[RMDB]
RNA sequence: GGGAACGACUCGAGUAGAGUCGAAAACCUCCAGAGUUCCUCUUCUUCUUCCUUGCUGAGGCUCUUUCCCCCUGCGGAGAGCUGCUUCUUCUUGUUCUCGAGGGCCUUCCUUCUUCGGUGAUCCUGCUAACCGCCUUGUUCGCAAGGCGGAAAAGAAACAACAACAACAAC
Reactivity to 2A3 in 0.01 (KOAc 150mM, MgCl2 10mM, bicine 150mM(pH8.5), 24C), signal-to-noise 4, nucleotides 027 to 129: c000c010u030c000c070a020g030a030g080u010u020c000c000u020c010u040u000c000u100u030c010u030u030c040c010u040u050g060c060u050g060a040g050g010c000u020c000u010u050u030c000c020c010c000c010u120g070c110g020g050a060g000a010g020c050u020g020c020u010u000c010u060u020c030u060u130g080u070u040c010u030c070g040a080g000g070g020c020c000u010u000c010c000u040u050c000u020u040c000g000g000u030g020a050u050c010c000u000g030c000u040a040a040
Reactivity to DMS in 0.01 (KOAc 150mM, MgCl2 10mM, bicine 150mM(pH8.5), 24C), signal-to-noise 1, nucleotides 027 to 129: c000c000u020c000c000a050g020a240g040u040u040c070c000u030c030u010u000c010u000u000c000u050u000c080c050u030u020g070c000u010g020a100g040g020c000u010c020u010u020u060c110c020c000c060c000u030g080c090g040g030a000g040a040g000c070u060g000c070u030u000c060u040u040c030u040u030g040u010u010c030u020c050g010a100g000g010g000c030c030u030u000c060c010u030u030c010u000u040c050g020g010u010g040a110u000c010c020u030g020c070u050a180a120

Structure probing data (2A3 and DMS) for a 170-nucleotide construct. It was measured as part of the RMDB library 15KLIB. DMS adducts were read by reverse transcription with MarathonRT. Conditions: 150 mM KOAc, 10 mM MgCl2 and 150 mM bicine (pH 8.5), 24 C. For 2A3, 7,083 sequencing reads were counted. 2A3 is a SHAPE reagent: it acylates the 2'-hydroxyl of flexible nucleotides of all four kinds.